[RMDB]
RNA sequence: GGGAACGACUCGAGUAGAGUCGAAAAGUGUUAUGUGGUAUGUAGUCGAUAGACCUUGAGGGAGCGGUUGUGCGUACGAAGCUUUAGGUAAGCUAAGGCCGAUAGGGGGCGGCUAUCGCGUACGGGAGCGACCUCAAGCAUACGGAAGCCGCCCUGGGUAUAUAUAAUUGUUCGCAAUUAUAUAUACAAAAGAAACAACAACAACAAC
Reactivity to DMS in 0.01 (KOAc 150mM, MgCl2 10mM, bicine 150mM(pH8.5), 24C), signal-to-noise 1, nucleotides 027 to 156: g040u000g020u000u000a090u000g030u000g050g030u000a060u010g010u000a090g020u000c040g000a200u010a100g000a070c080c020u000u000g010a060g030g020g000a300g060c030g020g040u000u010g000u000g050c010g010u000a070c060g000a120a070g010c010u000u000u010a030g010g000u000a070a170g030c030u000a020a100g000g040c030c030g000a110u010a040g030g000g000g020g010c010g020g030c010u000a090u000c020g020c030g000u000a000c010g000g040g000a120g000c000g000a160c030c000u000c020a000a030g000c000a070u010a060c000g010g000a180a140g010c000c010g000c010c010c000u000g000g010